[RMDB]
RNA sequence: GGGAACGACUCGAGUAGAGUCGAAAACUGCUUAACUUCGGUUAAGCAGAAAGUGAUCAAAGCCGAUAGACACCGGCAAGUGACCGGCAGCACAAGCCGAAAAAACGGAUGACUUCGGUCAUCCGAACGAUUCCUCAUUGUUCGCAAUGAGGAAUCGAAAAGAAACAACAACAACAAC
Reactivity to 2A3 in 0.01 (KOAc 150mM, MgCl2 10mM, bicine 150mM(pH8.5), 24C), signal-to-noise 1, nucleotides 027 to 126: c000u010g000c000u020u020a000a000c000u030u060c090g060g000u010u000a000a000g000c000a000g000a000a000a000g040u030g010a100u090c060a080a100a020g020c000c000g010a030u060a100g150a050c030a010c060c000g040g000c040a030a040g040u000g020a030c060c060g000g010c030a010g040c010a040c010a160a030g010c010c000g070a140a040a010a010a000a010c010g010g000a000u000g000a000c000u020u070c270g070g020u000c000a000u000c000c010g000a030a000
Reactivity to DMS in 0.01 (KOAc 150mM, MgCl2 10mM, bicine 150mM(pH8.5), 24C), signal-to-noise 1, nucleotides 027 to 126: c000u000g000c020u020u000a000a010c000u000u020c160g040g010u000u000a000a010g000c000a000g020a020a060a120g010u000g000a160u000c000a130a050a130g000c020c010g000a050u020a080g000a150c190a090c080c000g030g000c020a020a130g020u000g000a070c140c000g000g020c030a050g070c060a090c080a090a170g000c040c000g030a000a060a030a050a020a060c090g000g010a020u000g000a010c030u000u000c300g000g000u010c000a020u000c000c000g000a010a010